[RMDB]
About this RNA: Structure probing data (2A3 and DMS) for a 177-nucleotide construct. Reactivities are rounded to 0.1 and cut off at 0 and 3. Conditions: 150 mM KOAc, 10 mM MgCl2 and 150 mM bicine (pH 8.5), 24 C. For DMS the reverse transcriptase was MarathonRT.

RNA sequence: GGGAACGACUCGAGUAGAGUCGAAAAUAUGCCGACGAAAAGCUUGUCGGAGAGGCAAUGUCCAGAAAACCGGAGCCUCCGAUGAUGGUAGACGUGAAAUGGAUUCAGGAAUGUCUGGAUAAUCGAAUGGUAUUAAUGGUUUCGACCAUUAAUACCAAAAAGAAACAACAACAACAAC
Reactivity to 2A3 in 0.01 (KOAc 150mM, MgCl2 10mM, bicine 150mM(pH8.5), 24C), signal-to-noise 1, nucleotides 027 to 126: u250a090u130g020c000c000g010a020c010g020a000a000a050a130g090c030u000u070g020u070c010g040g000a010g040a000g020g030c080a120a160u210g010u000c040c020a030g050a000a070a010a060c040c000g030g000a030g000c030c000u010c020c000g150a150u110g020a050u080g120g090u130a050g050a090c040g010u060g090a000a000a070u170g040g010a110u120u130c010a020g000g020a090a030u020g010u000c000u000g050g020a050u030a050a030u080c010g060a050a170
Reactivity to DMS in 0.01 (KOAc 150mM, MgCl2 10mM, bicine 150mM(pH8.5), 24C), signal-to-noise 5, nucleotides 027 to 126: u010a090u010g020c030c000g000a030c030g010a080a090a140a150g010c160u010u000g010u000c020g010g000a100g010a080g000g010c060a130a110u010g010u000c000c040a070g000a060a050a120a160c040c030g010g020a200g010c020c020u000c030c040g020a080u000g000a100u010g010g010u010a070g010a080c050g020u000g010a040a120a100u000g010g000a110u000u000c040a030g010g000a090a100u000g010u000c000u000g010g000a040u010a060a080u010c060g010a070a110